[RMDB]
RNA sequence: GGGAACGACUCGAGUAGAGUCGAAAACUACUAUUACUAAGCCUCUUAAGUACAGCUAUAUUAACAAGUGCUCUCGUCUUCUUUCUGAUGAUCGUACUGAAGUACCUCAGUUAGUGAACGCUAAUCAUGGAGUGGAGUGGUUCGCCACUCCACUCCAAAAAGAAACAACAACAACAAC
Reactivity to 2A3 in 0.01 (KOAc 150mM, MgCl2 10mM, bicine 150mM(pH8.5), 24C), signal-to-noise 1, nucleotides 027 to 126: c000u090a040c000u080a120u290u070a120c060u060a030a000g030c000c000u000c000u030u190a160a000g030u000a040c020a000g000c190u120a040u000a030u110u100a110a000c050a300a000g080u000g120c000u000c000u000c000g000u000c040u000u000c050u010u100u000c160u060g100a110u170g000a030u010c010g000u000a000c000u000g020a030a040g120u080a070c070c070u030c000a000g000u000u120a020g000u030g040a060a000c000g010c000u010a030a160u050c010a150